[RMDB]
RNA sequence: GGGAACGACUCGAGUAGAGUCGAAAAACAAUGUGGAUGAAACUUGAGGACAUUGUACCAAGUGAAAUAAGCCAGACACAAAAAGACAACAACUCUAUGAUUUCACUUACGUGAGGUACAUAGUGUAGUCAAAUUGAUAGAGACAGAAAGCAGAAUGGAUUACUUCAAACUUCGGUUUGAAGUAAUCAAAAGAAACAACAACAACAAC
Reactivity to DMS in 0.01 (KOAc 150mM, MgCl2 10mM, bicine 150mM(pH8.5), 24C), signal-to-noise 2, nucleotides 027 to 156: a050c040a100a070u010g010u010g020g010a130u000g010a160a070a070c070u000u000g030a180g040g010a050c040a090u000u000g020u000a100c020c030a060a060g040u000g000a040a070a060u000a050a100g010c020c030a110g000a090c080a130c040a050a070a070a120a130g010a160c010a040a060c060a090a090c010u010c010u000a020u010g010a090u000u000u010c000a020c030u000u010a070c170g030u000g000a060g030g020u000a080c010a030u000a030g040u000g010u000a100g000u000c060a040a050a060u010u000g000a150u000a070g000a110g000a050c050a090g000a030a060a070g010c080a040g000a060a100u000g030
Reactivity to 2A3 in 0.01 (KOAc 150mM, MgCl2 10mM, bicine 150mM(pH8.5), 24C), signal-to-noise 5, nucleotides 027 to 156: a000c030a020a050u080g010u060g050g030a090u080g100a090a070a070c060u080u090g010a070g030g030a010c010a060u030u090g010u030a050c010c010a040a020g030u040g100a070a040a060u090a060a000g020c040c010a020g060a070c020a010c020a090a100a040a020a010g010a020c030a090a010c020a040a050c070u020c020u040a010u010g010a020u000u020u000c020a020c010u130u240a070c150g000u010g010a010g000g020u040a050c000a000u010a010g010u020g010u030a030g000u010c010a000a110a050u010u020g030a030u030a090g080a000g010a030c020a020g050a030a030a010g040c030a000g030a060a020u110g050
Chemical mapping of a 207-nucleotide RNA with DMS and 2A3. For DMS, 3,732 sequencing reads were counted. For 2A3 the reverse transcriptase was SuperScript II with manganese. For DMS the reverse transcriptase was MarathonRT. The RNA was probed in 150 mM KOAc, 10 mM MgCl2 and 150 mM bicine (pH 8.5) at 24 C. Source: RMDB library OK3TST, as collected in RNAgym.